[RMDB]
RNA sequence: GGGAACGACUCGAGUAGAGUCGAAAAGCUGCACACCGGCACUGGAACAAGGGAUUUACGACGAUCUCCACUGGCUUGGGCUAAGAUGGGAAACCCCGGUGCGCCGCCAGUCGGAACAUUUUGGCGAGCUCCAUAAAUUAUUCGUAAUUUAUGGAGCAAAAGAAACAACAACAACAAC
Reactivity to 2A3 in 0.01 (KOAc 150mM, MgCl2 10mM, bicine 150mM(pH8.5), 24C), signal-to-noise 4, nucleotides 027 to 126: g040c030u030g010c020a020c000a010c060c000g020g010c010a020c050u040g000g020a080a030c020a100a110g030g000g030a030u040u040u170a090c090g020a010c030g010a040u000c010u000c050c020a020c010u020g010g020c000u050u160g050g040g000c010u060a060a020g080a150u120g010g000g070a110a180a100c020c010c010c000g030g030u040g040c060g030c000c000g000c000c000a000g010u020c050g010g020a040a010c020a050u120u170u060u060g060g020c060g020a050
Reactivity to DMS in 0.01 (KOAc 150mM, MgCl2 10mM, bicine 150mM(pH8.5), 24C), signal-to-noise 5, nucleotides 027 to 126: g010c040u000g020c030a050c060a080c060c040g020g010c070a060c050u010g010g010a080a070c080a090a080g000g000g000a080u010u010u000a080c080g000a060c070g010a050u000c030u000c010c030a060c040u010g010g000c020u000u010g020g010g010c030u010a070a070g010a110u000g010g010g000a100a110a150c110c020c030c030g010g020u000g000c050g010c020c120g020c010c020a040g000u010c060g010g010a070a080c080a080u000u000u000u000g010g020c090g000a220